This 177-nucleotide RNA was probed chemically with 2A3 and DMS. Values cover nucleotides 27 to 126. For 2A3, 855 sequencing reads were counted.

[RMDB]
RNA sequence: GGGAACGACUCGAGUAGAGUCGAAAAAGACGCCGUUAUCUUCCUGCCAGUCACCGCCCGCAUACUCAUAAAUGCGGCGGAAGCUGACGUCGGGAGUGAGAUCUUUGUAGUCCUUGCAGGCCAGUUCGAUGCUCACGGGAUUCGUCCCGUGAGCAUCAAAAGAAACAACAACAACAAC
Reactivity to 2A3 in 0.01 (KOAc 150mM, MgCl2 10mM, bicine 150mM(pH8.5), 24C), signal-to-noise 2, nucleotides 027 to 126: a060g050a020c040g030c030c000g050u000u030a040u090c000u020u040c000c000u000g040c040c000a050g000u080c090a000c030c000g160c110c070c000g000c050a000u060a040c070u050c210a090u140a300a300a000u040g000c000g010g000c000g000g000a000a000g060c010u020g000a030c010g060u040c010g040g010g000a020g010u070g040a080g010a060u030c000u050u090u050g080u130a090g020u020c000c000u010u020g020c050a030g010g000c010c040a000g020u210u230c080
Reactivity to DMS in 0.01 (KOAc 150mM, MgCl2 10mM, bicine 150mM(pH8.5), 24C), signal-to-noise 1, nucleotides 027 to 126: a090g000a040c010g000c070c000g000u000u000a080u020c000u000u000c000c060u000g000c010c070a040g000u000c100a280c000c030g000c120c100c040g030c010a000u000a060c250u050c250a110u000a150a050a040u000g050c010g000g000c000g000g000a050a010g000c010u000g010a060c090g000u050c230g030g000g000a000g000u060g070a150g000a040u000c000u000u000u000g000u000a190g020u000c050c010u000u040g000c120a050g000g000c000c140a000g020u000u000c080
The RNA was probed in 150 mM KOAc, 10 mM MgCl2 and 150 mM bicine (pH 8.5) at 24 C. 2A3 is a SHAPE reagent: it acylates the 2'-hydroxyl of flexible nucleotides of all four kinds. For DMS, 1,170 sequencing reads were counted.